[RMDB]
RNA sequence: GGGAACGACUCGAGUAGAGUCGAAAAUGAGUGGUCGUGAAGAUUUAGUUGGUGAAUUGGUUGCAUUAAAAGUUGGUGAGGCUACAAUCAAAGCCAUCGCUCAAAUCGUCGAUCCAAUCACUGGUAACGAUCCAGCAGCAUUCGUGCUGCUGGAUCGAAAAGAAACAACAACAACAAC
Reactivity to DMS in 0.01 (KOAc 150mM, MgCl2 10mM, bicine 150mM(pH8.5), 24C), signal-to-noise 1, nucleotides 027 to 126: u020g020a050g010u000g010g000u000c020g010u000g020a060a130g000a030u000u000u000a070g000u020u010g120g070u000g000a120a100u000u000g020g030u000u010g020c080a120u000u000a040a060a170a050g020u000u000g020g080u010g000a140g010g000c000u000a110c120a050a010u000c120a070a050a140g000c070c000a000u010c030g030c080u000c260a050a030a030u000c050g000u010c030g020a070u020c040c010a030a070u030c030a070c050u000g000g000u000a060a140
Reactivity to 2A3 in 0.01 (KOAc 150mM, MgCl2 10mM, bicine 150mM(pH8.5), 24C), signal-to-noise 1, nucleotides 027 to 126: u110g010a020g020u120g000g000u010c020g020u040g050a070a100g000a060u060u070u150a040g090u030u200g050g010u010g020a140a090u000u020g000g010u000u030g000c020a000u040u240a070a080a180a070g060u050u050g050g080u110g030a050g000g000c010u050a010c070a040a040u050c060a010a120a020g050c020c010a030u050c000g000c000u080c100a030a100a070u030c020g100u030c000g000a000u000c060c000a010a010u000c020a020c210u110g050g030u130a090a000
Chemical mapping of a 177-nucleotide RNA with DMS and 2A3. The 2A3 profile rests on 844 reads. Source: RMDB library OK2TST, as collected in RNAgym. Reactivities are given for positions 27 through 126.